[RMDB]
RNA sequence: GGGAACGACUCGAGUAGAGUCGAAAAGAUGUCGGUUGAAGUGACCUUCUCCGGGAUAUCGGUAGCGCAACCUUACAUGAGAUCCGCAUCCUGCACGGAUGACUGUUUCGAAGUAGUCACCGAAGCCAUCUAUCCUACAGGCGAACCGUUUACCGCAUCUUUCCAUGACAUUCGUGUCAUGGAAAGAAAAAGAAACAACAACAACAAC
Reactivity to 2A3 in 0.01 (KOAc 150mM, MgCl2 10mM, bicine 150mM(pH8.5), 24C), signal-to-noise 3, nucleotides 027 to 156: g030a040u050g070u140c060g020g040u040u050g070a070a020g050u040g080a040c020c000u020u020c020u000c060c050g020g000g020a050u040a030u140c050g010g020u080a080g050c090g040c140a050a100c050c040u080u150a030c050a170u130g010a040g010a080u010c000c000g040c040a020u000c000c020u160g140c130a060c140g040g000a030u010g060a050c050u050g070u060u150u110c070g000a030a000g000u090a040g010u030c010a000c000c010g000a040a010g000c010c000a020u000c010u060a070u030c010c030u040a060c060a050g040g000c010g040a060a030c060c030g020u040u030u090a100c020c000g010c050a050
Reactivity to DMS in 0.01 (KOAc 150mM, MgCl2 10mM, bicine 150mM(pH8.5), 24C), signal-to-noise 1, nucleotides 027 to 156: g010a050u000g030u010c040g030g080u020u010g000a190a140g050u000g000a150c070c020u000u020c020u010c020c020g000g000g030a080u000a050u000c110g000g010u000a060g020c050g030c070a050a040c050c040u010u000a060c060a140u020g000a180g020a060u000c020c020g000c010a140u000c040c000u000g000c100a100c140g000g030a060u000g010a120c090u020g010u000u000u000c060g010a050a110g010u000a090g000u000c000a040c050c010g000a260a090g000c020c000a160u000c050u000a030u000c050c010u000a090c070a060g000g010c020g010a070a020c050c070g000u000u000u000a070c030c000g090c130a250